[RMDB]
RNA sequence: GGGAACGACUCGAGUAGAGUCGAAAAGAAAAAUGUAUAAGAAUUUCUAAAAACGGUUUUUCUACACAAGAAAUAAACUAGAUGUUCGCGUUUAGAAAAGAAACAACAACAACAAC
Reactivity to 2A3 in 0.01 (KOAc 150mM, MgCl2 10mM, bicine 150mM(pH8.5), 24C), signal-to-noise 2, nucleotides 027 to 095: g070a020a080a010a000a020u180g030u090a140u060a100a070g050a070a100u020u120u000c030u100a020a050a020a030a030c020g010g000u000u030u000u030u000c010u060a030c050a010c030a090a020g060a060a080a020u140a040a050a020c020u000a000g010a060u100g050u060u050c050g000c020g050u010u040u000a000g030a030
Reactivity to DMS in 0.01 (KOAc 150mM, MgCl2 10mM, bicine 150mM(pH8.5), 24C), signal-to-noise 7, nucleotides 027 to 095: g010a030a040a040a070a070u010g010u020a080u020a110a100g010a110a090u010u010u010c020u000a030a050a060a090a070c100g010g000u000u010u000u010u000c010u000a080c130a070c160a080a060g000a050a030a050u020a040a050a070c080u000a040g010a070u010g000u000u000c040g010c130g030u000u000u000a040g010a000